Notes:
Chemical mapping of a 207-nucleotide RNA with 2A3. 2A3 adducts were read by reverse transcription with SuperScript II with manganese.
[RMDB]
RNA sequence: GGGAACGACUCGAGUAGAGUCGAAAAGAUAUGGAUCGAGAACUACGAAUAUUCUUGGAUUUAAUGUUCGGAAACGAACAUUUGUCAGAUUUCCAGUGUAAUUCGCUCGAUCCUAAGUCAAAAGACGGUCGCAAAUGUUCGCAUUUGCGACCGUCAACCCAAGUUUAACGUUCGCGUUAAACUUGGGAAAAGAAACAACAACAACAAC
Reactivity to 2A3 in 0.01 (KOAc 150mM, MgCl2 10mM, bicine 150mM(pH8.5), 24C), signal-to-noise 1, nucleotides 027 to 156: g010a020u040a020u040g020g000a010u000c010g020a000g030a060a070c150u110a030c300g010a030a020u020a060u150u000c100u150u090g020g010a000u120u040u100a010a020u010g010u010u000c010g010g030a030a060a050c000g000a000a000c000a010u060u040u080g070u080c090a020g020a300u090u050u000c000c000a030g000u000g010u080a300a300u020u010c000g000c000u000c000g000a000u000c010c000u000a030a010g020u010c010a100a050a000a040g010a000c000g010g000u000c000g000c000a000a000a010u070g010u060u080c210g010c120a030u010u010u000g000c000g020a000c000c000g010u000c000a000a010